[RMDB]
RNA sequence: GGGAACGACUCGAGUAGAGUCGAAAACACUGAUGGCUUCCUUCAUCGAUGCAGACUGGGGAGAAGUGGGCGAGGUGUAGGCCCCAAGCAGUCCCAGGCUGAGAGCCCGGCACAGGACUGGAAAUACGCAAUGUGUUAUAUUCGUAUAACACAUUGCAAAAGAAACAACAACAACAAC
Reactivity to 2A3 in 0.01 (KOAc 150mM, MgCl2 10mM, bicine 150mM(pH8.5), 24C), signal-to-noise 7, nucleotides 027 to 126: c030a010c030u070g030a060u100g080g000c050u060u030c020c000u040u040c020a060u040c020g100a080u170g040c020a020g030a090c050u030g010g020g020g020a170g020a120a040g060u200g050g050g000c050g040a090g070g040u090g040u070a060g090g050c020c000c000c010a020a030g050c010a010g020u010c000c010c010a010g040g000c010u030g030a060g020a020g130c020c020c000g020g000c030a040c010a060g010g050a030c010u030g010g090a060a100a040u210a060c090
Reactivity to DMS in 0.01 (KOAc 150mM, MgCl2 10mM, bicine 150mM(pH8.5), 24C), signal-to-noise 7, nucleotides 027 to 126: c060a070c070u000g000a110u000g000g020c060u010u000c050c030u000u000c050a060u000c040g020a120u010g020c080a050g000a060c110u000g010g000g010g020a120g010a090a090g020u000g010g010g020c040g020a130g010g020u000g010u010a080g010g010c030c010c010c060a080a090g020c070a080g010u000c010c010c010a110g010g010c010u000g000a160g000a110g010c030c020c010g000g010c050a040c090a120g000g000a050c100u000g000g000a060a100a090u010a090c210